Chemical mapping of a 177-nucleotide RNA with DMS and 2A3. DMS adducts were read by reverse transcription with MarathonRT. For 2A3 the reverse transcriptase was SuperScript II with manganese. Reactivities are rounded to 0.1 and cut off at 0 and 3.

[RMDB]
RNA sequence: GGGAACGACUCGAGUAGAGUCGAAAAUGUGUUAUCUGCUGGAAGAAGGCUUAGAGUGAAAUGUAUACCUUCUCUUUAAGUUUACAUGCCUUCUCUCAUUGGUUCUGUAGGAGAUUUUACCCUAUUCGUCUAUUUCGUACUUCGGUACGAAAUAGACAAAAGAAACAACAACAACAAC
Reactivity to DMS in 0.01 (KOAc 150mM, MgCl2 10mM, bicine 150mM(pH8.5), 24C), signal-to-noise 2, nucleotides 027 to 126: u010g020u000g010u000u000a040u000c040u000g020c110u010g010g010a060a030g010a060a010g040g040c030u000u000a010g020a030g030u020g000a040a060a030u020g020u000a090u000a080c250c090u000u010c070u010c030u000u000u000a040a040g010u010u000u010a110c180a040u010g010c040c030u010u010c010u010c020u000c030a080u000u000g010g020u000u000c050u010g030u000a050g010g010a150g020a120u000u010u000u000a140c070c000c010u000a090u010u000c130
Reactivity to 2A3 in 0.01 (KOAc 150mM, MgCl2 10mM, bicine 150mM(pH8.5), 24C), signal-to-noise 1, nucleotides 027 to 126: u080g020u000g040u090u060a110u090c050u050g000c030u050g020g060a060a010g010a040a010g010g020c000u010u060a030g030a010g080u060g070a050a060a010u070g150u100a070u040a110c040c000u000u050c070u040c000u000u040u040a030a000g020u000u140u050a100c050a040u130g020c000c080u010u000c000u000c010u000c010a070u040u130g070g040u170u020c050u070g040u040a050g000g100a140g000a080u160u050u060u190a100c000c000c000u020a140u030u080c040